Chemical mapping of a 177-nucleotide RNA with DMS and 2A3. The data come from the RNA Mapping Database (RMDB), library OK2TRN. The RNA was probed in 150 mM KOAc, 10 mM MgCl2 and 150 mM bicine (pH 8.5) at 24 C. The 2A3 profile rests on 2,156 reads.
[RMDB]
RNA sequence: GGGAACGACUCGAGUAGAGUCGAAAAAUCAGGUGUCGACGAUGUUCGGCACUUGCGGCGUGCUGGAGGCGAGAUCGUCGGCGCUGGUACGGCCGGCGAUCACCGGGAUAUCGUCGCCCGCCAACGACGAUACCCAGCAGUUCGCUGCUGGGUAUCGAAAAGAAACAACAACAACAAC
Reactivity to DMS in 0.01 (KOAc 150mM, MgCl2 10mM, bicine 150mM(pH8.5), 24C), signal-to-noise 2, nucleotides 027 to 126: a120u030c040a030g000g010u000g000u000c010g010a050c030g000a190u020g010u020u010c010g030g000c010a000c010u000u000g010c080g010g000c070g040u000g020c040u000g000g010a260g000g020c160g030a090g000a030u000c020g030u000c000g020g000c000g030c060u010g000g020u020a080c170g020g010c000c020g000g010c000g010a010u000c010a020c060c040g020g000g000a040u000a060u010c010g010u000c010g010c030c030c050g000c130c080a100a070c070g000a100
Reactivity to 2A3 in 0.01 (KOAc 150mM, MgCl2 10mM, bicine 150mM(pH8.5), 24C), signal-to-noise 2, nucleotides 027 to 126: a010u090c040a020g050g020u040g020u050c030g010a020c060g200a300u250g060u160u020c020g000g010c000a000c000u000u040g000c020g010g000c030g000u060g000c020u060g070g130a130g060g010c050g060a120g000a090u000c010g000u010c010g000g010c120g030c150u120g070g130u130a070c080g020g000c010c000g000g000c000g000a010u000c030a010c000c010g000g000g030a120u110a040u140c000g030u000c000g010c020c010c000g050c030c010a100a010c050g060a020